[RMDB]
RNA sequence: GGGAACGACUCGAGUAGAGUCGAAAAGUCACAGUGGUUUGAGCAUCCUGAGCCCUGAGGCUGUUUCUGGUGGUGGACCUCCUCCUCCUCAGUAGGGAUGGGUAGAGGAAGCAGCUAGAGGCCUUGGCCUAUAAAAGUCCUUCGGGACUUUUAUAGGAAAAGAAACAACAACAACAAC
Reactivity to DMS in 0.01 (KOAc 150mM, MgCl2 10mM, bicine 150mM(pH8.5), 24C), signal-to-noise 3, nucleotides 027 to 126: g010u010c000a080c070a080g010u020g000g000u010u000u000g000a130g000c040a070u010c030c040u010g010a100g000c030c030c040u010g000a070g000g010c020u000g000u010u010u000c000u000g000g020u000g010g030u000g010g000a170c030c040u000c020c020u000c020c000u010c020c010u010c040a140g010u020a150g000g000g010a040u000g020g000g010u020a070g000a080g010g000a090a110g000c010a150g020c030u000a080g010a080g000g000c060c020u000u000g010g010
Reactivity to 2A3 in 0.01 (KOAc 150mM, MgCl2 10mM, bicine 150mM(pH8.5), 24C), signal-to-noise 2, nucleotides 027 to 126: g050u030c030a030c020a090g060u070g130g090u030u060u140g080a030g020c030a050u010c000c010u010g050a040g010c010c000c030u050g020a060g000g020c020u000g040u060u130u010c030u000g030g010u040g020g190u050g020g090a090c000c000u010c000c010u010c000c020u010c020c000u090c070a270g060u300a100g030g000g030a030u130g020g000g030u070a080g010a000g030g040a010a020g040c020a000g010c010u020a060g020a040g040g000c000c010u040u040g010g040
Background: Conditions: 150 mM KOAc, 10 mM MgCl2 and 150 mM bicine (pH 8.5), 24 C. An RNA of 177 nucleotides, treated with DMS and 2A3 and read out base by base. Values are in units of 0.01, from 0 to 300, in steps of 10. In probing experiments dimethyl sulfate is read out at A N1 and C N3, which are open when not base-paired. The 2A3 profile rests on 1,732 reads. The DMS profile rests on 3,162 reads. DMS adducts were read by reverse transcription with MarathonRT.